[RMDB]
RNA sequence: GGGAACGACUCGAGUAGAGUCGAAAAGUGGAGGUCAAGAUCGGUAUCACAGACAGUCCGCGCGAGCUGACCUUCUCCAGUGCGCAGACACCUGGUGAAAUCGAAGAGCUCGUUAGCGCCGCACUGAAAUUAGGUCCGUGUUCGCACGGACCUAAUUAAAAGAAACAACAACAACAAC
Reactivity to DMS in 0.01 (KOAc 150mM, MgCl2 10mM, bicine 150mM(pH8.5), 24C), signal-to-noise 1, nucleotides 027 to 126: g030u000g000g000a040g010g010u000c070a050a070g010a050u000c070g000g010u010a100u010c020a100c060a090g000a150c100a050g000u000c050c000g050c010g050c010g000a070g030c040u000g020a160c170c080u000u000c010u000c030c040a030g010u000g010c040g040c120a100g010a130c080a070c050c050u000g030g000u000g000a020a040a030u080c080g000a100a210g010a120g000c040u010c080g000u000u040a120g030c000g000c100c060g000c110a020c040u000g030a050
The data come from the RNA Mapping Database (RMDB), library OK2TST. An RNA of 177 nucleotides, treated with DMS and read out base by base. The reactions ran in a buffer of 150 mM KOAc, 10 mM MgCl2 and 150 mM bicine (pH 8.5), at 24 C.